[RMDB]
RNA sequence: GGGAACGACUCGAGUAGAGUCGAAAAGGUCGACAUCGUGGCCAUCCGGCUAUAGGCACUGCGUUAGUAUGCUGAAACUAACCAGGCUGCGGUAUCUGGCAGUAAUUGGUCACCCAUCAGUGGUGUGGGUAGUCACGCCUUUCGAGGCGUGACUACCAAAAGAAACAACAACAACAAC
Reactivity to 2A3 in 0.01 (KOAc 150mM, MgCl2 10mM, bicine 150mM(pH8.5), 24C), signal-to-noise 2, nucleotides 027 to 126: g000g010u050c010g040a090c040a110u080c040g300u050g020g000c000c020a000u020c020c000g000g000c110u300a290u280a190g080g000c170a160c280u000g000c020g050u000u000a000g080u030a020u220g050c080u020g010a100a000a000c010u000a000a000c010c000a000g030g000c030u020g000c000g000g000u000a020u060c000u000g070g080c000a030g020u160a010a120u000u000g020g000u030c000a030c040c070c000a050u140c170a120g120u060g010g040u100g000u120g080
Structure probing data (2A3) for a 177-nucleotide construct. Conditions: 150 mM KOAc, 10 mM MgCl2 and 150 mM bicine (pH 8.5), 24 C. The data come from the RNA Mapping Database (RMDB), library OK1LIB. For 2A3 the reverse transcriptase was SuperScript II with manganese. Values cover nucleotides 27 to 126.